RNA sequence: GGGAACGACUCGAGUAGAGUCGAAAAGACACGACGGAGACGUCGUGUCAAAGAGUGGGAAACCACUCAAAGAGCCACAGCUUCGGCUGUGGCUCAAGGCGCGGUACCGUCCGCGGAACAAGAGGAACUAUAGUUUUAGGUUCGCCUAAAACUAUAGAAAAGAAACAACAACAACAAC
Reactivity to 2A3 in 0.01 (KOAc 150mM, MgCl2 10mM, bicine 150mM(pH8.5), 24C), signal-to-noise 2, nucleotides 027 to 126: g000a000c010a000c000g010a000c010g030g030a070g030a070c010g010u010c000g010u000g000u000c000a000a000a000g000a010g000u000g010g000g010a000a060a110c000c010a000c010u010c000a020a040a000g000a000g000c000c030a020c020a020g070c040u170u220c300g110g000c030u010g000u000g000g000c020u000c010a000a020g020g020c000g000c040g000g060u210a300c040c040g060u070c000c000g000c000g030g040a050a040c070a060a040g100a060g130g030a050a030
Reactivity to DMS in 0.01 (KOAc 150mM, MgCl2 10mM, bicine 150mM(pH8.5), 24C), signal-to-noise 3, nucleotides 027 to 126: g000a010c000a000c000g030a020c010g010g000a270g000a230c010g040u000c000g010u000g000u000c000a030a040a060g000a010g040u000g000g000g010a180a120a210c000c010a010c000u000c000a050a060a090g000a040g030c000c000a020c000a000g030c000u000u020c260g040g060c000u020g130u010g000g000c000u000c000a040a130g000g010c020g030c000g010g000u010a250c190c120g010u010c000c000g020c010g000g000a060a080c170a070a060g010a070g010g010a130a240
This 177-nucleotide RNA was probed chemically with 2A3 and DMS. Values cover nucleotides 27 to 126. Conditions: 150 mM KOAc, 10 mM MgCl2 and 150 mM bicine (pH 8.5), 24 C. For DMS the reverse transcriptase was MarathonRT. Reactivities are rounded to 0.1 and cut off at 0 and 3.